[RMDB]
RNA sequence: GGGAACGACUCGAGUAGAGUCGAAAACCCUACUUCGGUAGGGCAACAUCCUAAGUCGUCCUGAGGCUUGCGACAUGGGACUAUCGGAAACGAUAGAAUCCCAACAGCGCAAGCUACCCACCAGGACGAUAUGGAGAGCGCGCUCCUUCGGGAGCAAGCUUCAAGCCAUGUUCGCAUGGCUUGAAGCAAAAGAAACAACAACAACAAC
Reactivity to DMS in 0.01 (KOAc 150mM, MgCl2 10mM, bicine 150mM(pH8.5), 24C), signal-to-noise 1, nucleotides 027 to 156: c000c000c000u000a000c000u000u000c230g000g090u000a000g030g070g000c030a070a030c020a160u000c030c000u000a030a170g010u000c010g000u000c000c010u000g010a150g070g020c000u000u000g000c000g000a100c070a300u000g010g030g000a010c000u010a010u000c000g050g000a250a140a290c020g000a010u000a000g000a040a250u010c000c000c000a000a080c050a190g000c000g000c000a010a010g000c000u000a000c020c000c000a300c090c010a030g030g010a020c000g000a000u000a160u000g000g000a080g010a100g020c040g030c070g010c030u010c000c000u000u000c280g040g030g010a110g000c000a000a040
Reactivity to 2A3 in 0.01 (KOAc 150mM, MgCl2 10mM, bicine 150mM(pH8.5), 24C), signal-to-noise 4, nucleotides 027 to 156: c000c000c000u010a020c000u010u080c290g120g000u010a000g010g010g020c010a020a030c010a120u010c000c000u030a140a020g020u000c010g000u010c000c000u000g010a010g010g010c000u010u010g000c010g060a190c050a120u070g000g000g010a010c000u000a000u000c000g070g030a130a040a040c000g000a010u000a010g060a070a130u020c010c000c010a010a030c090a040g040c010g000c000a000a000g000c000u010a020c020c020c020a070c020c000a000g000g000a000c000g000a000u000a010u030g010g000a100g010a030g060c170g000c050g000c040u010c010c000u030u100c210g090g000g000a000g000c000a000a020